Overview:
An RNA of 177 nucleotides, treated with 2A3 and DMS and read out base by base. The reactions ran in a buffer of 150 mM KOAc, 10 mM MgCl2 and 150 mM bicine (pH 8.5), at 24 C. Source: RMDB library OK1LIB, as collected in RNAgym.
RNA sequence: GGGAACGACUCGAGUAGAGUCGAAAAAGCUGCACUACCGCGCGGAGGAGGUGCGGCUGGCCUACGAGCAGCGGGUGGCGCGGCGGAUGCGGCGGAGCUUCACGCCCUUGUCGCAGUCCACAAGACCGCAGGAGGUGCCGUUCGCGGUACCUCCUGCAAAAGAAACAACAACAACAAC
Reactivity to 2A3 in 0.01 (KOAc 150mM, MgCl2 10mM, bicine 150mM(pH8.5), 24C), signal-to-noise 4, nucleotides 027 to 126: a000g020c020u030g000c000a010c010u110a130c030c010g050c030g000c080g130g160a140g010g070a110g000g040u020g010c000g010g030c010u000g010g080c000c000u020a080c050g100a050g040c120a010g000c000g040g040g000u020g030g030c000g000c010g010g020c020g030g000a060u070g010c100g010g010c020g010g040a070g040c050u200u210c120a060c070g000c010c000c010u020u150g000u020c000g000c060a040g070u060c010c000a020c000a060a020g040a040c050c060
Reactivity to DMS in 0.01 (KOAc 150mM, MgCl2 10mM, bicine 150mM(pH8.5), 24C), signal-to-noise 3, nucleotides 027 to 126: a010g010c000u000g000c000a040c000u010a230c010c010g000c030g010c020g000g010a270g000g020a300g010g010u000g000c000g020g010c020u010g000g000c000c000u000a110c160g000a110g090c060a050g000c010g000g010g030u000g000g040c080g000c010g020g000c140g000g000a170u010g000c060g000g000c030g000g030a130g010c020u000u080c170a120c040g000c010c010c010u000u000g040u000c010g000c010a000g000u000c030c020a020c080a120a110g000a120c090c060